This 177-nucleotide RNA was probed chemically with DMS and 2A3.
The data come from the RNA Mapping Database (RMDB), library TTRDEL.
The 2A3 profile rests on 30,796 reads.
The RNA was probed in 150 mM KOAc, 10 mM MgCl2 and 150 mM bicine (pH 8.5) at 24 C.
The DMS profile rests on 16,309 reads.

[RMDB]
RNA sequence: GGGAACGACUCGAGUAGAGUCGAAAAGAUAUGGACAAAGAACUACCGCAGCGAAGAACUUUAUCGGAAACGAUAAAGGGAGCUGCAGGCUUUGUCCUAAGUCAAGAGGACAUCUUCGGAUGUCCAACUCUAAUAGAUAGUUCGCUAUCUAUUAGAGAAAAGAAACAACAACAACAAC
Reactivity to DMS in 0.01 (KOAc 150mM, MgCl2 10mM, bicine 150mM(pH8.5), 24C), signal-to-noise 8, nucleotides 027 to 126: g010a040u010a300u000g000g000a010c010a000a010a010g010a120a090c120u020a300c090c050g000c010a010g000c000g000a080a140g000a110a180c000u000u000u000a000u000c000g000g000a090a070a160c000g010a010u000a000a000a010g000g000g000a050g010c000u000g010c010a020g010g000c000u000u000u010g010u000c000c000u000a020a090g010u010c030a100a110g010a120g000g010a010c000a000u000c000u000u010c220g020g010a020u000g000u000c000c000a020a040
Reactivity to 2A3 in 0.01 (KOAc 150mM, MgCl2 10mM, bicine 150mM(pH8.5), 24C), signal-to-noise 8, nucleotides 027 to 126: g020a020u090a040u150g000g000a000c000a000a020a020g020a180a090c070u140a080c200c110g000c020a010g010c000g190a300a030g010a060a050c000u000u010u010a010u000c000g010g000a070a050a050c000g010a010u010a000a010a000g010g000g000a010g000c010u010g010c010a010g020g010c010u020u010u000g000u000c010c000u000a120a000g040u020c050a040a050g060a160g210g000a000c010a010u000c010u070u080c300g120g000a010u000g000u000c000c010a000a000